[RMDB]
RNA sequence: GGGAACGACUCGAGUAGAGUCGAAAACGCAGAGGGUUCUGAUAACAAAGAACUUAGAUAGCCGCAUCGGUAUUAUAGGAUGUAGUCGGUGAGCCGGAAUGCCUGCAUCGUAAGCCUAUAAGUAAAUUUAAGUGUAAUCACUUCGGUGAUUACACAACUUCCUUAUCUUCUUCGGAAGAUAAGGAAGAAAAGAAACAACAACAACAAC
Reactivity to DMS in 0.01 (KOAc 150mM, MgCl2 10mM, bicine 150mM(pH8.5), 24C), signal-to-noise 2, nucleotides 027 to 156: c060g020c040a090g000a260g020g040g020u010u010c030u000g010a190u030a110a250c300a120a150a080g010a030a040c010u000u000a120g020a160u000a100g030c000c060g010c030a080u000c030g000g020u000a060u000u010a070u010a070g000g000a080u010g020u000a110g020u010c000g030g030u010g000a060g020c000c010g020g000a140a100u010g030c060c050u030g000c000a020u000c040g030u000a090a140g030c000c010u000a040u020a050a110g020u010a060a070a160u000u000u000a060a150g000u000g000u000a000a010u010c000a010c010u000u000c300g060g000u000g000a020u000u000a010c010a010c020a040a070
Reactivity to 2A3 in 0.01 (KOAc 150mM, MgCl2 10mM, bicine 150mM(pH8.5), 24C), signal-to-noise 4, nucleotides 027 to 156: c060g000c030a050g050a100g090g030g010u020u010c030u030g070a100u110a200a040c030a020a150a020g020a000a000c000u000u070a030g050a180u080a070g070c030c020g050c080a100u110c050g060g030u120a080u170u050a030u080a040g020g010a050u040g050u090a040g100u080c040g000g020u030g020a020g030c020c040g060g080a100a020u110g040c000c000u020g030c010a010u010c020g040u020a040a030g010c000c010u070a080u030a120a050g110u140a030a140a180u140u140u120a120a020g000u010g000u010a000a000u000c000a000c000u030u010c070g060g000u000g000a000u000u000a000c000a000c000a000a000
An RNA of 207 nucleotides, treated with DMS and 2A3 and read out base by base. The DMS profile rests on 2,710 reads. DMS adducts were read by reverse transcription with MarathonRT. Values cover nucleotides 27 to 156. 2A3 adducts were read by reverse transcription with SuperScript II with manganese.